[RMDB]
RNA sequence: GGGAACGACUCGAGUAGAGUCGAAAACCUCGAGGACGACGGCGUCGACGUGGGUGCUGCCGGUGUCGAGACCGAGGACGCGCAUGUUCGGUCCCCCGGUGACGUCGGGAGUCUCGGUGCGGGGCUGGAGCACCGACUAGUUCGCUAGUCGGUGCUCAAAAGAAACAACAACAACAAC
Reactivity to 2A3 in 0.01 (KOAc 150mM, MgCl2 10mM, bicine 150mM(pH8.5), 24C), signal-to-noise 1, nucleotides 027 to 126: c020c020u010c060g020a040g060g040a030c030g000a010c020g030g020c000g050u060c050g020a030c020g050u160g050g040g020u090g030c070u120g060c010c020g030g000u050g050u070c090g060a080g040a120c030c040g060a120g030g080a040c030g030c030g020c160a080u120g060u190u180c030g000g060u020c000c000c000c020c010g000g060u040g010a010c000g010u020c000g000g000g020a050g020u060c010u000c020g000g000u030g070c060g020g040g010g000c070u110g010
Reactivity to DMS in 0.01 (KOAc 150mM, MgCl2 10mM, bicine 150mM(pH8.5), 24C), signal-to-noise 1, nucleotides 027 to 126: c030c000u010c080g000a040g010g010a040c000g010a300c030g010g020c010g000u010c000g000a050c050g010u000g000g000g060u030g020c040u010g020c120c000g010g020u010g000u010c020g000a100g010a050c020c030g020a170g010g000a080c030g020c070g000c120a070u000g000u010u000c050g030g000u000c110c010c020c010c000g020g000u010g010a060c050g030u000c000g020g000g010a130g010u000c010u000c010g000g010u000g000c050g000g000g020g020c180u000g000